[RMDB]
RNA sequence: GGGAACGACUCGAGUAGAGUCGAAAAAUCGUACUGAUUUCAUGGUUGCGCCCCAGUACCGGGUCUAUCUUGCCUUCACGAGCUAAUGCAGUCAGAUCCGUGGUGUACUGCGCCAAUGUCGCGGUACUCUUAGCAUCGUUUUCGAACGAUGCUAAGAAAAAGAAACAACAACAACAAC
Reactivity to 2A3 in 0.01 (KOAc 150mM, MgCl2 10mM, bicine 150mM(pH8.5), 24C), signal-to-noise 2, nucleotides 027 to 126: a010u080c010g040u040a070c030u040g050a170u070u080u200c050a060u090g100g000u090u100g030c020g030c030c030c010c000a020g060u050a060c070c000g010g000g000u000c010u000a020u010c030u060u110g000c000c000u050u070c100a100c150g110a060g000c090u150a050a040u110g000c010a010g020u000c040a010g000a040u000c010c020g040u070g050g020u080g000u010a020c010u020g000c000g000c020c030a210a160u270g060u180c020g020c010g010g020u000a000c020
Reactivity to DMS in 0.01 (KOAc 150mM, MgCl2 10mM, bicine 150mM(pH8.5), 24C), signal-to-noise 5, nucleotides 027 to 126: a030u000c050g020u000a050c090u010g000a080u000u000u000c090a090u010g010g010u000u000g010c110g010c050c030c020c080a100g020u010a070c130c030g010g010g020u000c020u010a050u000c020u000u000g020c010c070u000u000c090a130c160g010a130g010c130u010a030a060u000g000c020a050g000u000c110a020g010a020u000c010c010g010u000g010g020u000g010u000a000c030u000g010c020g010c020c160a060a110u010g010u010c030g010c010g010g000u010a010c020
The record gives the reactivity of an RNA of 177 nucleotides to 2A3 and DMS. Values cover nucleotides 27 to 126. It was measured as part of the RMDB library OK2TRN. Conditions: 150 mM KOAc, 10 mM MgCl2 and 150 mM bicine (pH 8.5), 24 C.